Background:
This 207-nucleotide RNA was probed chemically with 2A3. For 2A3, 655 sequencing reads were counted. The RNA was probed in 150 mM KOAc, 10 mM MgCl2 and 150 mM bicine (pH 8.5) at 24 C. For 2A3 the reverse transcriptase was SuperScript II with manganese.
[RMDB]
RNA sequence: GGGAACGACUCGAGUAGAGUCGAAAAUGGCAAAUGGAGCCACUUCCAUUAAUCUUCCUGUGCAUUUGAACCUUAGCAGGACUCUAUAUAGCAGUCAGCGGCAUGGAUAACGACCCUUCUGCCUGCAAACUCGCUUUUAGAUGAGAACACAAGCUCAGUGCUAUCCUGAUUUCGAUCAGGAUAGCACAAAAGAAACAACAACAACAAC
Reactivity to 2A3 in 0.01 (KOAc 150mM, MgCl2 10mM, bicine 150mM(pH8.5), 24C), signal-to-noise 2, nucleotides 027 to 156: u110g000g030c010a050a020a110u040g010g030a040g050c030c080a030c070u070u000c020c000a010u020u130a030a130u020c120u060u000c010c030u020g010u060g020c050a290u020u020u210g050a060a060c040c030u040u050a000g000c010a000g000g040a040c000u000c000u010a060u000a030u100a140g000c000a000g080u150c030a010g040c000g010g000c000a020u090g000g070a030u090a280a000c130g120a150c120c000c000u040u170c010u030g000c020c070u090g000c000a030a030a040c000u030c080g010c000u050u070u110u020a090g030a050u160g030a000g050a190a050c130a000c100a220a020g050c000u010c020a000